[RMDB]
This 177-nucleotide RNA was probed chemically with DMS. Conditions: 150 mM KOAc, 10 mM MgCl2 and 150 mM bicine (pH 8.5), 24 C.

RNA sequence: GGGAACGACUCGAGUAGAGUCGAAAAUUUUGUAAAACAUGUCCCAAAGAAAAUCUCGUGGCAUGCAAACGGUUUUCUUUUGAGAAUCCUAAAGAAGUUGCUCUAGAGCAUAGGAGUACAAUUUUUGUAUAGCGUACACUUUCGAGUGUACGCUAUAAAAAGAAACAACAACAACAAC
Reactivity to DMS in 0.01 (KOAc 150mM, MgCl2 10mM, bicine 150mM(pH8.5), 24C), signal-to-noise 1, nucleotides 027 to 126: u020u010u010u020g000u010a080a190a060a230c060a060u000g010u000c020c000c010a060a030a080g010a020a000a050a000u000c010u020c110g010u000g020g030c180a070u010g030c110a120a070a060c100g010g010u000u010u000u000c020u000u000u020u010g010a110g010a050a070u000c060c060u000a050a090a110g020a050a130g020u000u000g000c000u020c020u000a140g010a090g010c080a060u000a060g060g000a040g020u020a020c060a000a040u000u000u000u000u000g020